[RMDB]
RNA sequence: GGGAACGACUCGAGUAGAGUCGAAAAGGAGGACGAAGCAUAUUUCUGUUUCUGGAGGAUUAUUUAUAAUCUGCCGGAAAGUCUUGCAGGUGGCUGGGAUAUGUUCAGUCUGGUAGACUUAAGCACGAAAACGUGUCCUUGUUCGCAAGGACACGAAGAUUACCUCAAUGUUCGCAUUGAGGUAAUCAAAAGAAACAACAACAACAAC
Reactivity to DMS in 0.01 (KOAc 150mM, MgCl2 10mM, bicine 150mM(pH8.5), 24C), signal-to-noise 2, nucleotides 027 to 156: g010g000a150g030g020a060c030g020a110a110g000c040a070u010a060u000u000u000c030u000g000u010u010u000c010u000g000g000a060g000g010a010u000u000a030u000u000u000a070u000a080a020u000c000u000g010c000c000g010g000a010a050a060g010u000c030u000u000g010c050a130g030g020u000g010g010c030u000g000g010g010a080u000a050u000g000u000u010c070a200g010u000c010u000g080g010u010a070g020a090c040u000u000a040a080g000c040a090c050g010a080a040a090a190c020g020u000g020u010c000c000u000u000g010u010u010c300g000c020a010a010g000g000a010c010a000c000g020a010a060
Reactivity to 2A3 in 0.01 (KOAc 150mM, MgCl2 10mM, bicine 150mM(pH8.5), 24C), signal-to-noise 5, nucleotides 027 to 156: g050g010a020g000g010a000c030g030a040a020g010c040a030u040a070u080u130u060c050u070g120u050u030u010c010u010g010g010a040g010g000a000u000u020a020u030u280u020a110u030a040a010u010c010u030g070c010c010g000g010a030a010a000g020u040c040u110u120g050c040a030g030g110u060g050g000c020u040g010g000g000a030u030a010u070g070u100u030c040a010g020u000c010u020g010g040u070a020g010a020c000u080u090a060a020g030c050a050c110g080a040a050a050a010c010g000u000g000u000c000c000u000u000g020u050u050c080g010c120a000a000g000g010a010c000a000c000g000a000a000

Source information: Chemical mapping of a 207-nucleotide RNA with DMS and 2A3. DMS adducts were read by reverse transcription with MarathonRT. Source: RMDB library M2RFPK, as collected in RNAgym. The RNA was probed in 150 mM KOAc, 10 mM MgCl2 and 150 mM bicine (pH 8.5) at 24 C.